[RMDB]
RNA sequence: GGGAACGACUCGAGUAGAGUCGAAAAGAUGCCUGCUUGCCGAAUAUCAUGGUGGAAAAUGGCCGCUUUUCUGGAUUCAUCGACUGUGGCCGGCUGGGUGUGGCGGACCGCUAUCAGGACAUAGCGUUGGCUACCCGUGAUAUUGCUGAAGAGCUUGGCGGCGAAUGGGCUGACCGCUUCCUCGUGCUUUACGGUAUCGCCGCUCCCGAUUCGCAGCGCAUCGCCUUCUAUCGCCUUCUUGACGAGUUCUUCUGAGCGGGACUCUGGCACGCCGGUUCGCCGGCGUGAAAAGAAACAACAACAACAAC
Reactivity to 2A3 in 0.01 (KOAc 150mM, MgCl2 10mM, bicine 150mM(pH8.5), 24C), signal-to-noise 4, nucleotides 027 to 266: g000a000u000g010c000c000u000g000c020u010u080g030c010c010g070a100a080u110a050u250c020a020u060g050g000u060g060g030a050a080a120a170u100g090g010c020c020g030c090u230u200u230u190c170u240g100g050a110u260u140c030a050u090c080g090a020c000u010g000u000g030g040c030c000g000g000c020u080g000g020g000u020g000u000g010g000c000g010g010a010c000c000g010c030u040a040u110c030a050g030g010a030c010a120u160a020g010c000g010u020u060g030g000c020u020a120c010c000c000g020u000g030a130u120a080u150u120g010c010u040g070a110a070g060a010g160c030u040u070g070g000c010g000g000c040g030a140a140u150g080g020g000c000u020g010a020c020c100g010c010u040u040c010c010u060c090g060u040g090c060u100u090u120a040c020g010g010u070a200u220c000g000c010c000g010c000u010c000c020c000g070a150u150u150c040g000c020a010g010c000g000c120a010u000c000g000c010c010u130u050c040u070a210u100c050g060c040c010u100u070c020u070u120g060a040c040g010a010g050u010u020c000u090u040c110u100g080a070g120c080g020g030g020a030c010u000c030u030g020g030
Reactivity to DMS in 0.01 (KOAc 150mM, MgCl2 10mM, bicine 150mM(pH8.5), 24C), signal-to-noise 4, nucleotides 027 to 266: g000a030u000g000c000c010u000g010c020u010u010g020c030c000g000a130a120u020a090u010c030a010u010g020g010u000g000g000a040a080a120a090u010g020g010c010c030g020c210u010u010u030u040c160u040g010g010a110u010u020c060a070u000c050g020a030c040u000g030u000g000g010c170c010g000g010c050u010g010g010g010u010g000u000g010g000c000g000g000a030c030c000g010c180u000a040u000c090a060g000g000a090c300a110u010a020g000c010g020u010u010g010g000c010u000a070c200c010c040g010u010g010a130u010a050u020u010g000c050u010g000a120a110g000a040g020c030u000u010g010g010c060g000g010c030g010a070a090u020g000g000g010c020u000g010a050c070c070g000c060u000u000c100c080u000c080g020u010g000c120u010u010u010a150c030g000g010u000a080u010c010g000c020c010g010c020u000c000c020c000g010a070u020u010c130g010c000a020g000c190g000c030a010u000c040g010c020c040u000u020c070u000a100u000c100g000c050c060u010u000c030u010u000g010a270c050g010a070g000u000u000c010u000u010c110u020g010a090g020c100g000g000g000a040c030u010c010u000g010g010
Background:
Structure probing data (2A3 and DMS) for a 307-nucleotide construct. The reactions ran in a buffer of 150 mM KOAc, 10 mM MgCl2 and 150 mM bicine (pH 8.5), at 24 C. For 2A3 the reverse transcriptase was SuperScript II with manganese. It was measured as part of the RMDB library POS240. DMS adducts were read by reverse transcription with MarathonRT.